[RMDB]
RNA sequence: GGGAACGACUCGAGUAGAGUCGAAAACGGGUGACGGCGAGUGCUGCGCGUCGGUUGCGCUCGACGGUCCGGUCCGGCACCUGUCGUCCGGAAUCCGGCGUUCGGCCGAUCGCGUCACGACUUGCGAACCCCGGUAGGGAUUCGUCCCUACCGGGGUAAAAGAAACAACAACAACAAC
Reactivity to DMS in 0.01 (KOAc 150mM, MgCl2 10mM, bicine 150mM(pH8.5), 24C), signal-to-noise 2, nucleotides 027 to 126: c130g010g010g040u010g010a050c030g040g030c020g020a050g060u000g020c030u000g010c110g010c010g010u000c030g000g000u000u010g000c050g000c040u000c000g040a050c030g010g010u000c000c020g010g020u010c190c050g000g030c130a050c060c050u030g020u000c010g010u010c120c010g010g000a040a050u020c000c010g000g010c020g010u000u000c050g000g000c000c050g000a120u000c000g020c030g000u000c030a000c040g010a060c110u000u000g030c140g000a160
Reactivity to 2A3 in 0.01 (KOAc 150mM, MgCl2 10mM, bicine 150mM(pH8.5), 24C), signal-to-noise 2, nucleotides 027 to 126: c050g110g020g060u040g010a040c080g110g170c020g020a030g000u170g060c010u010g000c000g020c000g040u010c000g000g000u030u070g190c020g000c050u070c000g010a010c000g030g000u000c030c000g020g010u090c120c070g030g030c060a070c020c040u130g000u030c010g030u000c000c000g010g060a020a050u160c020c000g000g010c000g020u020u030c010g030g000c020c030g060a130u060c000g000c000g040u000c030a000c010g020a060c010u070u140g000c050g070a070